[RMDB]
An RNA of 177 nucleotides, treated with DMS and 2A3 and read out base by base. Conditions: 150 mM KOAc, 10 mM MgCl2 and 150 mM bicine (pH 8.5), 24 C.

RNA sequence: GGGAACGACUCGAGUAGAGUCGAAAAUAUAAUGGGUCAUAUGCAUUUAGUUCGUGGCCCAGUUUAUGACCACAUAAAGGACAUUAUUUUCUGAUUAAUGCCAACUUUGAGUUUAGGAUAUGUUCUGACUAAUUGCGGUUUUCGAACCGCAAUUAGUAAAAGAAACAACAACAACAAC
Reactivity to DMS in 0.01 (KOAc 150mM, MgCl2 10mM, bicine 150mM(pH8.5), 24C), signal-to-noise 2, nucleotides 027 to 126: u010a030u020a090a020u000g000g020g030u020c000a030u000a130u030g040c090a200u040u010u020a180g010u000u010c150g000u000g010g000c000c000c000a030g000u000u000u000a020u000g000a300c000c040a060c210a120u020a040a040a040g010g000a070c020a010u010u000a010u010u010u010u030c110u000g010a020u010u000a000a020u000g000c050c040a070a140c080u000u010u010g020a090g010u020u000u020a100g000g010a090u000a050u040g010u020u000c010u010g000
Reactivity to 2A3 in 0.01 (KOAc 150mM, MgCl2 10mM, bicine 150mM(pH8.5), 24C), signal-to-noise 2, nucleotides 027 to 126: u190a030u100a060a100u040g000g000g000u000c000a000u020a030u200g040c010a010u050u190u210a180g000u100u070c250g080u000g010g000c000c000c000a000g000u000u000u000a020u040g040a020c060c000a020c030a090u050a140a050a000g050g000a020c000a000u060u030a060u140u060u140u100c180u090g150a120u260u080a070a040u050g000c000c060a090a070c020u060u030u130g200a230g010u030u050u130a000g020g140a050u070a020u120g050u010u010c030u000g030